This 177-nucleotide RNA was probed chemically with DMS and 2A3. Reactivities are given for positions 27 through 126. Conditions: 150 mM KOAc, 10 mM MgCl2 and 150 mM bicine (pH 8.5), 24 C.

RNA sequence: GGGAACGACUCGAGUAGAGUCGAAAACAUGAAGUUUAAUAUGAGAAAGGAGAUGAUGCAGGAACGUUCAUUAUACGGUGAUUACCUUGCAUCAUCACUUGUCCAGCUUGAUGAGAUUGAAAAACUCCCUGUCCCAAUUAUUCGUAAUUGGGACAGGAAAAGAAACAACAACAACAAC
Reactivity to DMS in 0.01 (KOAc 150mM, MgCl2 10mM, bicine 150mM(pH8.5), 24C), signal-to-noise 3, nucleotides 027 to 126: c010a030u000g000a010a010g010u000u000u020a090a070u000a100u030g010a150g000a090a010a020g000g020a180g020a000u000g000a020u010g000c000a020g000g000a110a120c180g010u000u000c080a030u020u000a120u030a090c180g010g030u010g000a090u020u020a110c100c000u000u020g000c020a010u010c000a010u000c000a010c000u000u000g020u010c020c060a070g000c020u000u000g000a040u040g000a050g000a120u020u000g000a060a050a030a050a110c080u000c150
Reactivity to 2A3 in 0.01 (KOAc 150mM, MgCl2 10mM, bicine 150mM(pH8.5), 24C), signal-to-noise 8, nucleotides 027 to 126: c020a030u060g110a020a010g030u060u120u180a300a190u250a160u190g160a240g050a060a020a000g070g070a300g020a110u000g000a000u000g000c000a010g010g030a130a040c080g050u060u030c040a080u060u260a210u150a300c110g080g000u060g070a060u060u070a100c020c000u030u100g010c000a000u000c000a000u000c000a000c000u000u010g070u000c000c000a010g000c010u080u040g050a030u020g000a050g050a190u080u190g100a130a080a040a030a020c020u050c010